[RMDB]
RNA sequence: GGGAACGACUCGAGUAGAGUCGAAAAUUUAAUCGUUAUGUUAUGCUGAUACAUCCUGAUCAGUUACAUAUGUUGCCAUUUGAGGUUGAACAUUCGUCCCAUACACGAAUUUGCUAUACAACUGGUGCCAAUAGCGUUGAUUGCCUGCCAACCGAAAGUUCAUGUAAAGAUUCGUCUUUACAUGAACAAAAGAAACAACAACAACAAC
Reactivity to DMS in 0.01 (KOAc 150mM, MgCl2 10mM, bicine 150mM(pH8.5), 24C), signal-to-noise 3, nucleotides 027 to 156: u010u010u010a090a110u010c100g010u000u000a050u010g000u000u000a070u010g030c030u010g020a030u010a050c030a130u010c070c020u020g000a040u000c010a040g030u000u000a030c030a070u000a090u010g020u000u000g010c010c020a180u000u000u000g010a100g020g020u000u010g020a080a100c070a140u000u000c030g020u000c010c020c200a130u000a130c270a050c040g010a040a080u000u000u000g010c030u010a110u010a120c050a030a060c040u000g020g010u010g000c040c020a050a110u010a070g010c040g020u000u000g020a110u000u000g010c030c030u000g000c050c010a030a140c020c000g030a080a040a210
Reactivity to 2A3 in 0.01 (KOAc 150mM, MgCl2 10mM, bicine 150mM(pH8.5), 24C), signal-to-noise 5, nucleotides 027 to 156: u150u130u100a120a110u120c080g030u040u060a030u030g060u110u030a080u260g020c000u000g000a010u070a080c060a100u110c090c070u040g010a030u010c010a000g040u050u020a030c020a010u060a040u090g060u060u050g010c060c050a130u060u040u150g150a060g000g040u050u080g090a060a020c030a090u040u070c020g030u020c030c030c020a060u070a090c090a000c020g030a030a040u060u060u050g030c040u050a030u020a160c040a070a050c080u070g010g030u040g020c010c010a110a090u070a060g070c050g020u030u050g020a140u020u100g040c010c000u020g010c020c030a050a080c040c020g120a070a050a020